[RMDB]
RNA sequence: GGGAACGACUCGAGUAGAGUCGAAAAGACACGACGGAGACGUCGUGUCAAAGAGUGGGAAACCACUCAAAGAGCCACAGCUUCGGCUGUGGCUCAAGGCGCGGCAGAGUCCGCGGAACAAACGAAACGUAUUACGUGGAUUCGUCCACGUAAUACGAAAAGAAACAACAACAACAAC
Reactivity to 2A3 in 0.01 (KOAc 150mM, MgCl2 10mM, bicine 150mM(pH8.5), 24C), signal-to-noise 2, nucleotides 027 to 126: g000a000c000a010c010g020a000c010g040g000a040g050a070c000g020u000c010g000u000g010u010c000a020a000a000g000a000g000u020g000g020g040a020a050a090c010c010a000c010u020c000a030a040a010g010a000g020c020c010a000c010a000g040c030u090u200c300g140g000c000u050g000u010g000g020c000u000c000a000a000g010g010c000g000c020g030g000c090a160g110a040g300u030c000c010g010c010g000g030a050a010c050a100a060a010c050g110a080a070a020
Reactivity to DMS in 0.01 (KOAc 150mM, MgCl2 10mM, bicine 150mM(pH8.5), 24C), signal-to-noise 2, nucleotides 027 to 126: g020a020c000a030c010g000a010c000g000g000a300g010a210c000g040u000c000g000u000g010u000c010a010a020a210g030a030g000u010g010g010g030a170a080a180c000c000a010c000u000c000a040a080a150g000a000g010c010c020a010c000a020g010c000u000u000c300g010g010c020u000g010u000g000g020c000u000c000a020a020g010g000c010g040c030g000g000c000a300g040a210g000u020c000c030g000c000g010g010a050a070c150a040a070a090c150g000a090a060a180